[RMDB]
RNA sequence: GGGAACGACUCGAGUAGAGUCGAAAAGAUAUGGAUAACCUAAUGGAGCUACCCAUCACCACUAUGAGAUCGGAAACGAUCUCACGAAUGGUGUUGGGUAGCGUUGAAAUUAGGUUAUCCUAAGUCACCAUAGCAAGGGGUUCGCCCCUUGCUAUGGAAAAGAAACAACAACAACAAC
Reactivity to DMS in 0.01 (KOAc 150mM, MgCl2 10mM, bicine 150mM(pH8.5), 24C), signal-to-noise 1, nucleotides 027 to 126: g020a080u010a300u000g010g020a020u000a000a000c000c000u000a000a030u000g020g000a080g000c000u000a000c000c000c010a010u000c000a000c010c030a070c120u000a220u010g000a010g000a020u000c000g010g000a190a060a270c000g000a000u000c000u000c000a000c070g030a040a040u000g000g030u000g030u000u000g000g000g010u000a000g000c000g010u010u020g020a090a160a020u000u000a020g010g000u000u000a010u000c000c000u000a000a060g000u030c050a300
The data come from the RNA Mapping Database (RMDB), library TTRINS. Chemical mapping of a 177-nucleotide RNA with DMS.